Source: RMDB library VIROID, as collected in RNAgym. An RNA of 177 nucleotides, treated with 2A3 and DMS and read out base by base. Values are in units of 0.01, from 0 to 300, in steps of 10.
[RMDB]
RNA sequence: GGGAACGACUCGAGUAGAGUCGAAAAGCAGGCUAUGAGCAAGGGGAAGGAAGUGAGUUCGGAGCUCAUCCGCCAGAUGCUUUUGGCCCACGACAAGUUGGGAAUGGAAGUACCCGAGGAUGUGCAAGCCCAAUGUUUAGUUCGCUAAACAUUGGGCAAAAGAAACAACAACAACAAC
Reactivity to 2A3 in 0.01 (KOAc 150mM, MgCl2 10mM, bicine 150mM(pH8.5), 24C), signal-to-noise 1, nucleotides 027 to 126: g000c030a010g000g000c020u060a010u110g000a000g020c020a010a080g060g000g080g030a050a110g100g040a030a110g110u140g160a030g040u010u090c040g130g110a060g000c010u040c020a030u040c030c010g000c050c010a050g030a160u090g060c000u080u010u000u040g100g010c000c000c020a050c030g050a030c040a050a060g070u140u070g040g020g010a080a100u030g050g010a060a000g040u030a050c000c000c000g010a050g060g080a050u080g030u080g000c050a060a020
Reactivity to DMS in 0.01 (KOAc 150mM, MgCl2 10mM, bicine 150mM(pH8.5), 24C), signal-to-noise 2, nucleotides 027 to 126: g050c030a050g000g010c050u020a040u010g000a010g010c020a130a110g000g010g010g030a060a070g000g010a090a060g000u000g000a020g020u000u000c100g000g000a300g000c020u000c000a030u000c160c160g010c050c020a050g010a290u020g040c000u000u010u010u000g000g000c000c000c000a060c050g000a030c260a020a200g010u010u000g000g030g010a060a110u000g010g000a080a070g020u000a100c010c020c040g000a130g020g000a170u000g010u000g010c120a240a130
Reactivities are given for positions 27 through 126.